An RNA of 177 nucleotides, treated with 2A3 and DMS and read out base by base. The reactions ran in a buffer of 150 mM KOAc, 10 mM MgCl2 and 150 mM bicine (pH 8.5), at 24 C. In probing experiments dimethyl sulfate is read out at A N1 and C N3, which are open when not base-paired.
RNA sequence: GGGAACGACUCGAGUAGAGUCGAAAAGCGUCCACGCGACCCAGCCAGAGAGGGCUCAGUCAGCCGGCGCGGCACCUACAAGCUCAGUCGGGAUCCUGGAGAGGCGGGAAGGCAGCGGGGCCCUUUCCAGGACAAUGUAUUUCGAUACAUUGUCCUGAAAAGAAACAACAACAACAAC
Reactivity to 2A3 in 0.01 (KOAc 150mM, MgCl2 10mM, bicine 150mM(pH8.5), 24C), signal-to-noise 3, nucleotides 027 to 126: g010c000g030u030c060c050a110c060g030c010g030a050c030c000c000a020g100c050c030a030g020a010g010a030g080g010g020c020u030c030a030g050u010c020a020g070c000c010g020g000c080g000c030g010g000c010a070c020c000u110a090c080a130a030g010c010u020c050a020g040u040c040g050g020g030a110u040c010c010u070g040g040a190g020a030g120g210c030g010g010g000a020a020g030g000c040a020g020c020g010g010g000g030c010c010c030u010u020u020c010
Reactivity to DMS in 0.01 (KOAc 150mM, MgCl2 10mM, bicine 150mM(pH8.5), 24C), signal-to-noise 5, nucleotides 027 to 126: g020c070g010u010c100c110a100c070g000c030g000a140c010c030c090a110g030c060c110a150g000a140g000a070g000g010g020c020u000c060a080g010u010c090a140g020c010c080g000g030c050g010c110g010g000c040a080c070c040u000a090c160a100a090g010c020u010c080a130g010u000c050g010g000g010a090u000c040c020u000g010g010a120g000a110g000g010c070g010g000g000a090a070g010g000c050a120g010c060g010g020g000g010c050c020c010u000u010u020c010